Conditions: 150 mM KOAc, 10 mM MgCl2 and 150 mM bicine (pH 8.5), 24 C. The record gives the reactivity of an RNA of 177 nucleotides to DMS and 2A3. DMS adducts were read by reverse transcription with MarathonRT. It was measured as part of the RMDB library OK2TST. For 2A3, 4,000 sequencing reads were counted.

RNA sequence: GGGAACGACUCGAGUAGAGUCGAAAAGAGCCGUCUGGCUACGAGGACUUCCCCAGACCCAUUCUCCAACUACGGCUAUCUUCGCUGGCCGUCAGCUACAUGCGAGGAUCGGCGCUCGAUGUGCGAAAUAUCAGUCCGUAUUCGUACGGACUGAUAUAAAAGAAACAACAACAACAAC
Reactivity to DMS in 0.01 (KOAc 150mM, MgCl2 10mM, bicine 150mM(pH8.5), 24C), signal-to-noise 5, nucleotides 027 to 126: g000a060g020c020c000g010u010c140u020g020g030c020u000a060c070g020a050g000g010a300c300u010u000c020c020c000c110a110g000a090c030c010c030a100u000u000c020u010c020c050a070a120c050u010a030c030g010g010c010u000a060u000c080u000u000c060g010c120u000g000g010c000c030g000u000c130a020g000c050u000a090c110a090u000g000c020g000a050g010g000a070u000c120g020g000c060g020c060u000c090g020a070u010g010u010g010c030g000a060a100
Reactivity to 2A3 in 0.01 (KOAc 150mM, MgCl2 10mM, bicine 150mM(pH8.5), 24C), signal-to-noise 3, nucleotides 027 to 126: g050a000g020c060c020g160u120c140u170g010g030c000u030a070c040g020a040g030g060a050c010u020u020c000c010c000c000a010g030a070c000c000c010a030u050u020c030u020c020c010a090a070c010u040a010c010g020g000c010u010a040u090c070u090u060c040g020c050u010g020g000c000c000g030u030c030a010g000c010u110a050c040a110u120g030c070g000a010g000g000a020u030c050g020g000c060g000c030u020c030g080a090u100g060u090g090c020g040a110a130